Record summary
Chemical mapping of a 177-nucleotide RNA with DMS. DMS adducts were read by reverse transcription with MarathonRT. The data come from the RNA Mapping Database (RMDB), library TTRDEL.

RNA sequence: GGGAACGACUCGAGUAGAGUCGAAAAGAUAUGGAGCGAAUGGAGAGUUCACGGUUUCUUCGGAAACGAGAAACCGUGAACUCGUUGAAAUUCGCUCCUAAGUCAAACAGCUCCUUCGGGAGCUGAAUCUUAGUGCUUACUUCGGUAAGCACUAAGAAAAAGAAACAACAACAACAAC
Reactivity to DMS in 0.01 (KOAc 150mM, MgCl2 10mM, bicine 150mM(pH8.5), 24C), signal-to-noise 2, nucleotides 027 to 126: g000a020u010a300u010g010g000a000g010c000g000a010a000u000g000g000a060g000a030g000u000u030c000a000c000g000g020u000u000u000c000u010u000c020g000g000a080a060a180c020g000a000g000a000a010a000c000c000g040u000g000a000a020c000u000c000g000u000u000g050a150a120a020u000u000c000g010c000u010c000c000u000a010a050g010u010c030a120a110a300c000a020g000c010u000c000c010u000u000c200g020g010g010a030g000c000u000g000a020a100